[RMDB]
RNA sequence: GGGAACGACUCGAGUAGAGUCGAAAAGAAGAGAAGCGCGCGAAUUGGAAACCAGCGAACCGUAUUACGCGCGCAAGGAACCGGGCCUUGGUUCGUUGGAAAGAAUAGAUAAUGUCGCUGGUAAAGAACUACGGUACGGUUUCGACCGUACCGUAGUAAAAGAAACAACAACAACAAC
Reactivity to DMS in 0.01 (KOAc 150mM, MgCl2 10mM, bicine 150mM(pH8.5), 24C), signal-to-noise 2, nucleotides 027 to 126: g000a050a110g000a200g000a250a180g000c000g030c000g040c000g010a080a100u060u040g010g000a110a060a060c010c000a000g020c020g010a060a160c100c100g000u000a070u000u000a130c000g030c000g020c010g020c040a000a040g000g020a070a080c090c010g010g010g020c000c070u000u000g000g020u000u000c020g000u000u020g030g000a090a010a060g020a080a110u000a030g000a150u030a120a150u020g000u000c010g000c040u070g010g010u000a080a050a040g010a160
Reactivity to 2A3 in 0.01 (KOAc 150mM, MgCl2 10mM, bicine 150mM(pH8.5), 24C), signal-to-noise 2, nucleotides 027 to 126: g130a010a030g040a000g050a210a030g000c000g000c010g050c020g050a020a040u030u080g020g020a090a090a050c040c010a010g000c000g030a030a100c010c010g030u100a040u160u200a110c000g010c000g000c000g020c000a000a030g120g000a030a030c060c030g000g160g050c020c060u150u100g020g020u000u010c000g000u050u060g020g030a010a020a010g020a020a070u300a040g130a060u230a240a130u260g030u060c010g000c020u000g000g010u010a020a000a060g060a020